[RMDB]
RNA sequence: GGGAACGACUCGAGUAGAGUCGAAAAGAUAUGGAUUGACCUACUCGUAGCGUGAAUAGCAACAGCGUGGUGUCGGAAACGACAUUCACGACAUGCUACACGCUACGAGUAGGUCAAUCCUAAGUCACCUUAGCAUUCGGUUCGCCGAAUGCUAAGGAAAAGAAACAACAACAACAAC
Reactivity to DMS in 0.01 (KOAc 150mM, MgCl2 10mM, bicine 150mM(pH8.5), 24C), signal-to-noise 1, nucleotides 027 to 126: g000a030u000a300u010g010g010a020u010u000g000a000c020c010u010a010c000u010c000g050u000a010g030c000g000u000g000a130a150u000a010g030c020a010a090c300a200g000c040g000u020g000g000u000g010u000c000g000g030a180a050a200c000g000a010c000a040u000u000c010a000c000g020a080c130a180u000g020c010u000a040c000a040c000g020c020u000a000c000g000a000g000u000a000g000g010u000c000a000a010u020c010c000u000a020a110g000u000c050a290